[RMDB]
RNA sequence: GGGAACGACUCGAGUAGAGUCGAAAAAAGGUCAGAUUUUCGAGGAAACGUUAGAAUUUAUUUGCACGUCACUAUGGUAUUCAGAAGAUAUUUACGAGUAUACUCCUCAGGAUUUAAGUAUUCCGGCUGAUACUGGGAAAGUGUUUGAUAAAAACGACAUACUAUGCCGAUUCGUCGGCAUAGUAUGAAAAGAAACAACAACAACAAC
Reactivity to 2A3 in 0.01 (KOAc 150mM, MgCl2 10mM, bicine 150mM(pH8.5), 24C), signal-to-noise 3, nucleotides 027 to 156: a010a000g060g000u060c020a040g010a090u050u050u120u170c050g020a040g010g030a070a040a010c050g010u110u110a070g030a160a060u060u090u050a110u030u120u160g020c000a010c020g020u040c010a020c070u070a050u100g010g060u040a080u120u100c030a020g020a110a030g020a110u030a080u100u060u080a070c020g000a000g010u020a020u030a130c040u050c020c000u030c030a020g020g020a030u060u070u150a070a010g010u030a050u070u000c030c010g060g000c030u010g010a020u010a070c030u040g010g000g040a040a060a090g010u020g020u060u110u060g140a130u080a060a060a020a000a020c030g040a000
Reactivity to DMS in 0.01 (KOAc 150mM, MgCl2 10mM, bicine 150mM(pH8.5), 24C), signal-to-noise 2, nucleotides 027 to 156: a050a030g000g010u000c030a090g020a070u010u000u000u000c060g020a080g020g000a100a100a070c010g020u000u000a070g000a120a120u000u000u000a060u040u000u010g010c030a060c060g010u000c050a060c080u000a090u020g010g010u000a050u000u000c020a050g000a130a100g010a090u010a020u010u000u000a100c090g000a120g040u000a100u000a100c050u000c060c020u000c050a120g010g000a070u000u010u000a040a090g000u000a090u000u000c010c020g040g040c030u010g010a080u010a030c040u030g030g010g000a070a050a090g010u000g000u000u020u000g000a110u010a030a030a050a040a130c020g020a150
Record summary:
Structure probing data (2A3 and DMS) for a 207-nucleotide construct. DMS adducts were read by reverse transcription with MarathonRT. Source: RMDB library OK3TST, as collected in RNAgym. Values cover nucleotides 27 to 156. 2A3 adducts were read by reverse transcription with SuperScript II with manganese.